[RMDB]
RNA sequence: GGGAACGACUCGAGUAGAGUCGAAAAUGUGGAAAUGCUCAUCUCAGCAUGCGGAUUUUCUAAGAACCAUGUCAUGGGGAAGACCGCUUGUCGGGGCGACGGUUCCUCAUCCGUUUGAGUACCUGGAAUUUUCUGAUUCAAGGUUAGAAGAUUGCAAUACUAAUAUGAUCUUCGGAUCAUAUUAGUAAAAAGAAACAACAACAACAAC
Reactivity to 2A3 in 0.01 (KOAc 150mM, MgCl2 10mM, bicine 150mM(pH8.5), 24C), signal-to-noise 4, nucleotides 027 to 156: u140g010u050g020g020a000a060a070u080g000c090u020c010a060u010c030u010c020a010g000c000a010u050g000c020g060g080a170u040u040u060u000c040u080a190a110g050a170a110c020c030a050u140g120u260c070a120u080g040g020g000g000a010a000g010a030c010c010g010c030u010u020g040u050c050g000g010g010g020c020g000a010c020g010g010u010u000c000c000u040c010a040u040c020c030g040u060u080u150g050a040g040u040a030c010c010u010g040g040a050a040u040u060u090u140c060u150g030a030u050u060c060a110a040g050g020u020u060a030g030a080a020g030a110u060u150g040c050a030a090
Reactivity to DMS in 0.01 (KOAc 150mM, MgCl2 10mM, bicine 150mM(pH8.5), 24C), signal-to-noise 2, nucleotides 027 to 156: u000g020u000g000g000a040a070a060u000g000c060u010c050a110u000c050u010c050a080g010c060a020u000g000c030g020g000a300u010u000u000u010c020u000a130a120g020a170a150c030c070a050u000g020u010c100a100u000g010g020g020g020a070a050g020a060c020c000g000c030u010u000g040u010c040g020g000g030g000c000g000a020c010g020g010u010u010c000c000u000c020a020u000c030c060g010u010u010u000g000a180g020u000a040c050c020u000g020g020a040a010u000u000u000u020c120u020g020a010u000u000c020a120a110g100g030u000u000a060g020a040a080g010a030u000u000g010c050a070a250
The record gives the reactivity of an RNA of 207 nucleotides to 2A3 and DMS. 2A3 is a SHAPE reagent: it acylates the 2'-hydroxyl of flexible nucleotides of all four kinds. The RNA was probed in 150 mM KOAc, 10 mM MgCl2 and 150 mM bicine (pH 8.5) at 24 C. It was measured as part of the RMDB library OK3TST. The DMS profile rests on 4,034 reads.